[RMDB]
RNA sequence: GGGAACGACUCGAGUAGAGUCGAAAAGCGUGAAGCAGAUUUGUCUCAAGGAAUUCAUGGCAUAUUUACCACAGUAAUUGUUCGUGACAAGAGACCAUGUCAGUUCUCUGCUGUGGAUCCUAUCAUCUCUUGAAGUAAGCUUCGGCUUACUUCAAGAAAAAGAAACAACAACAACAAC
Reactivity to DMS in 0.01 (KOAc 150mM, MgCl2 10mM, bicine 150mM(pH8.5), 24C), signal-to-noise 4, nucleotides 027 to 126: g000c030g030u010g010a020a040g010c070a150g000a120u010u020u010g000u020c050u000c050a140a130g000g000a080a130u040u010c030a030u010g000g000c020a030u010a090u030u000u010a080c020c170a050c110a070g010u000a050a160u020u000g000u010u020c000g020u010g010a020c030a070a120g000a100g000a060c110c140a140u000g060u000c040a030g010u000u000c010u020c050u020g000c010u000g000u000g000g000a030u010c000c010u010a090u050c150a120u020c120
Reactivity to 2A3 in 0.01 (KOAc 150mM, MgCl2 10mM, bicine 150mM(pH8.5), 24C), signal-to-noise 9, nucleotides 027 to 126: g020c010g010u060g020a060a010g040c080a030g030a110u080u120u140g130u030c040u020c090a060a140g140g050a100a130u080u020c030a030u060g100g000c030a010u030a150u140u100u110a070c010c010a020c020a050g030u080a110a100u140u080g030u100u090c150g090u110g040a010c010a040a050g070a010g030a120c080c080a050u090g010u020c000a000g000u010u010c060u010c020u040g000c000u000g000u010g030g030a030u010c000c010u130a140u190c060a180u050c050